[RMDB]
RNA sequence: GGGAACGACUCGAGUAGAGUCGAAAAAUGUCUGAAGCUAAAUGCUGGGUGGAAACCGAUCUGAAGAAAGGGCCACAUGAAUUCUGUUCACAGCAUACGCUUUAUAUUAAGGAUGGCGACGAUGGUUAAGCGCCGUUGUUCGCAACGGCGAAAAGAAACAACAACAACAAC
Reactivity to 2A3 in 0.01 (KOAc 150mM, MgCl2 10mM, bicine 150mM(pH8.5), 24C), signal-to-noise 3, nucleotides 027 to 129: a000u100g040u000c000u100g020a000a000g000c030u030a190a190a000u050g000c030u030g090g000g000u020g020g000a100a060a140c000c000g010a060u010c070u190g150a100a090g010a020a090a000g000g050g070c010c000a030c000a020u070g060a010a030u200u050c050u140g090u010u000c020a000c000a000g000c000a020u030a050c010g000c000u010u010u010a160u000a040u070u170a020a020g020g010a040u050g070g000c000g000a000c020g010a010u090g000g090u010u050a070a070g050
Reactivity to DMS in 0.01 (KOAc 150mM, MgCl2 10mM, bicine 150mM(pH8.5), 24C), signal-to-noise 5, nucleotides 027 to 129: a040u010g010u030c030u020g030a030a030g020c010u000a180a190a050u000g040c040u030g000g030g040u050g030g000a060a100a100c030c010g030a190u040c010u030g080a300a150g010a000a040a300g000g000g000c030c030a040c040a190u040g030a000a000u030u060c150u070g010u000u000c000a250c000a080g010c010a000u010a170c300g020c040u010u000u010a030u040a110u030u060a020a110g000g000a010u010g000g000c000g030a000c000g040a040u000g010g040u000u000a060a130g030